[RMDB]
RNA sequence: GGGAACGACUCGAGUAGAGUCGAAAACGCUUUGAGACUCAUCCAAAAAAAAUCGUUACUAUUCCGGUAUUACUUCUGAGAUUCUUUCGGAUAUCUCUUUGUGAUUCUUCUGGAUAUCCUUUUGGAAACGUAUGCACUGAUUCGUCAGUGCAUACGUAAAAGAAACAACAACAACAAC
Reactivity to 2A3 in 0.01 (KOAc 150mM, MgCl2 10mM, bicine 150mM(pH8.5), 24C), signal-to-noise 3, nucleotides 027 to 126: c030g000c070u110u050u090g090a110g020a050c030u000c070a080u050c050c040a000a000a010a020a020a010a030a120u060c020g010u020u040a050c040u050a090u180u000c020c010g000g020u030a030u030u040a040c020u080u070c040u080g030a020g000a050u050u030c010u040u200u130c120g020g000a050u050a030u060c020u000c000u020u030u030g030u010g050a090u080u030c010u150u010c030u080g030g030a030u040a070u040c020c070u060u100u040u080g090g020a110a080
Reactivity to DMS in 0.01 (KOAc 150mM, MgCl2 10mM, bicine 150mM(pH8.5), 24C), signal-to-noise 2, nucleotides 027 to 126: c130g010c160u000u000u000g010a180g020a080c130u000c060a110u000c060c040a000a000a000a050a120a020a100a060u000c020g000u010u000a050c100u000a100u000u010c010c030g010g000u000a040u000u000a050c030u020u000c090u000g000a050g000a020u000u000c020u000u010u020c290g020g000a030u010a020u000c010u000c030u010u010u000g000u000g010a070u010u000c060u000u000c050u000g010g010a040u020a050u000c020c020u000u030u000u000g010g000a100a080
Source: RMDB library OK2TST, as collected in RNAgym. This 177-nucleotide RNA was probed chemically with 2A3 and DMS. For DMS the reverse transcriptase was MarathonRT. 2A3 is a SHAPE reagent: it acylates the 2'-hydroxyl of flexible nucleotides of all four kinds. The 2A3 profile rests on 2,520 reads. The RNA was probed in 150 mM KOAc, 10 mM MgCl2 and 150 mM bicine (pH 8.5) at 24 C. 2A3 adducts were read by reverse transcription with SuperScript II with manganese.